Background
The record gives the reactivity of an RNA of 207 nucleotides to 2A3 and DMS. The data come from the RNA Mapping Database (RMDB), library M2RFPK. 2A3 adducts were read by reverse transcription with SuperScript II with manganese. The DMS profile rests on 3,287 reads. For DMS the reverse transcriptase was MarathonRT.
RNA sequence: GGGAACGACUCGAGUAGAGUCGAAAACGGUUACGUCUUCUUUACCGUUAUCAAGGAAGGUACUCGGCCAUGCUAAGGGAAGCAUUAUUCCUUAGGCGCAUGUCGCCGCCAGCAUGGUGUGAGGGGAAAAAGUAUGCUGGGUUCGCCCAGCAUACAACCAUAAGAUCCACUUCGGUGGAUCUUAUGGAAAAGAAACAACAACAACAAC
Reactivity to 2A3 in 0.01 (KOAc 150mM, MgCl2 10mM, bicine 150mM(pH8.5), 24C), signal-to-noise 5, nucleotides 027 to 156: c010g000g020u050u040a030c070g030u020c060u070u030c010u020u060u060a040c010c000g090u070u050a080u120c100a060a010g030g030a070a020g040g040u090a070c010u010c010g030g000c000c000a000u000g000c020u050a050a050g020g000g010a010a000g010c140a180u120u120a130u150u140c000c000u030u100a070g000g020c000g000c020a130u240g130u240c040g010c040c010g040c030c000a000g000c000a000u030g000g020u050g140u130g020a010g000g000g020g030a070a060a010a000a000g000u000a000u000g000c000u000g020g000g020u030u030c090g080c040c000c000a000g000c000a000u000a000c000a000a000
Reactivity to DMS in 0.01 (KOAc 150mM, MgCl2 10mM, bicine 150mM(pH8.5), 24C), signal-to-noise 2, nucleotides 027 to 156: c030g000g000u000u000a040c040g000u000c030u010u000c030u000u000u040a030c020c000g020u030u000a030u010c060a040a020g020g030a080a000g000g000u010a070c020u000c030g020g010c010c010a020u060g020c000u010a170a180g010g010g040a010a090g020c210a140u000u020a140u000u020c000c000u000u020a080g030g030c030g000c020a130u000g010u000c040g030c030c010g070c110c110a160g040c000a000u000g020g030u000g010u000g010a090g020g000g020g000a040a090a120a080a160g010u000a000u000g030c000u020g000g060g010u000u000c300g020c010c010c010a020g000c000a000u000a010c000a060a090